[RMDB]
RNA sequence: GGGAACGACUCGAGUAGAGUCGAAAAGAGCGGGCGCAUGCAGAGUCGGGCUUGCGCACGCAGAAGCUGCGUGAAGAGGAGAUGCGCCGGCGCGCGGCCAGCCUCGGCCCUGUCCCCAUCCGCGCAAGCCUGGGAUUGGAUUCGUCCAAUCCCAGGCAAAAGAAACAACAACAACAAC
Reactivity to DMS in 0.01 (KOAc 150mM, MgCl2 10mM, bicine 150mM(pH8.5), 24C), signal-to-noise 1, nucleotides 027 to 126: g020a120g000c000g020g000g040c050g000c040a040u000g000c110a080g000a180g040u000c090g050g000g000c010u000u000g000c060g020c000a000c020g000c010a040g040a180a130g030c070u000g020c000g000u000g020a050a100g000a170g050g000a110g000a110u000g050c160g000c020c070g000g000c090g000c030g000c050g010g020c050c060a180g010c130c040u000c060g010g020c030c000c030u000g000u000c010c090c010c110a090u040c050c070g050c000g000c070a050a150
Reactivity to 2A3 in 0.01 (KOAc 150mM, MgCl2 10mM, bicine 150mM(pH8.5), 24C), signal-to-noise 1, nucleotides 027 to 126: g060a000g010c030g000g000g000c020g000c050a020u150g010c030a010g020a030g110u100c050g000g000g020c030u040u060g000c040g000c050a040c040g000c020a000g060a140a000g030c080u070g000c000g010u060g080a120a070g040a170g140g070a190g020a120u080g010c020g030c050c030g050g050c040g000c010g000c020g020g020c020c000a000g000c010c010u040c020g030g000c020c000c020u060g030u060c000c040c020c000a050u030c000c010g050c020g030c020a080a000

This 177-nucleotide RNA was probed chemically with DMS and 2A3. The DMS profile rests on 888 reads. It was measured as part of the RMDB library OK2TRN. For 2A3 the reverse transcriptase was SuperScript II with manganese. DMS adducts were read by reverse transcription with MarathonRT. The reactions ran in a buffer of 150 mM KOAc, 10 mM MgCl2 and 150 mM bicine (pH 8.5), at 24 C.